[RMDB]
RNA sequence: GGGAACGACUCGAGUAGAGUCGAAAAGCAAAAGAAUUAAAUACCCCACUUAUAGUUGCUAAAGAUGCGACUACAAGUUUAAUGAGUCGCUUAACAACGUUUUUAGAGCAUGCACUUGCAAAGACGAAACCCGUUGGGUUUUCGAACCCAACGGGUUAAAAGAAACAACAACAACAAC
Reactivity to 2A3 in 0.01 (KOAc 150mM, MgCl2 10mM, bicine 150mM(pH8.5), 24C), signal-to-noise 2, nucleotides 027 to 126: g010c010a040a070a160a050g210a080a030u150u160a070a080a040u250a130c010c000c000c000a030c000u160u000a010u190a130g000u000u000g090c000u160a120a170a290g030a110u060g030c000g000a000c000u080a050c110a010a040g150u090u220u190a140a030u110g030a000g050u090c000g070c090u050u110a110a050c010a060a000c000g040u000u000u000u000u150a210g070a020g100c020a060u120g000c000a000c080u030u080g000c070a070a120a050g000a000c020g090a000
Reactivity to DMS in 0.01 (KOAc 150mM, MgCl2 10mM, bicine 150mM(pH8.5), 24C), signal-to-noise 1, nucleotides 027 to 126: g050c140a140a030a030a200g000a100a040u000u010a030a060a070u000a260c130c000c000c100a160c040u000u010a060u000a110g000u000u010g060c000u000a150a180a150g000a080u020g020c000g000a000c000u000a040c020a040a010g000u000u010u030a060a080u080g000a000g050u000c190g000c010u000u010a090a090c100a060a190c040g010u000u000u000u000u000a150g000a260g000c000a090u000g000c160a100c040u000u030g010c060a010a060a010g030a090c090g000a060
Structure probing data (2A3 and DMS) for a 177-nucleotide construct. DMS (dimethyl sulfate) methylates the pairing face of unpaired adenines and cytosines. For 2A3 the reverse transcriptase was SuperScript II with manganese. The RNA was probed in 150 mM KOAc, 10 mM MgCl2 and 150 mM bicine (pH 8.5) at 24 C. Source: RMDB library OK1LIB, as collected in RNAgym. The DMS profile rests on 1,132 reads.